Chemical mapping of a 207-nucleotide RNA with 2A3. Source: RMDB library M2RFPK, as collected in RNAgym. For 2A3, 653 sequencing reads were counted. The reactions ran in a buffer of 150 mM KOAc, 10 mM MgCl2 and 150 mM bicine (pH 8.5), at 24 C.
RNA sequence: GGGAACGACUCGAGUAGAGUCGAAAAGCAAGUCGCAUCGCAAAACCGCGGCAAGUGGAGUUAGCGAGAGGAGGCUGGGUUUUGUCUUCCUUAAGCAAUCGGUCACCGAGAAGGUGUGGUCGUUACCUAGACAGUUUUCUGUUCGCAGAAAACUGAAGCAUAACCCUCGUUUCGACGAGGGUUAUGCAAAAGAAACAACAACAACAAC
Reactivity to 2A3 in 0.01 (KOAc 150mM, MgCl2 10mM, bicine 150mM(pH8.5), 24C), signal-to-noise 1, nucleotides 027 to 156: g020c040a010a090g060u020c000g030c100a060u020c060g000c100a010a030a020a080c110c070g000c020g020g000c080a190a020g020u020g010g050a100g060u040u100a010g040c000g000a000g020a000g040g030a040g000g000c020u080g040g000g230u030u110u160u120g040u000c020u110u100c040c000u010u000a030a010g050c020a040a080u000c060g000g000u060c010a000c030c100g040a110g070a160a030g100g020u070g030u030g040g000u000c000g020u030u040a190c000c000u030a060g060a050c000a000g000u000u000u000u000c000u000g010u070u080c220g000c040a000g040a000a000a000a000c000u000g000a030a040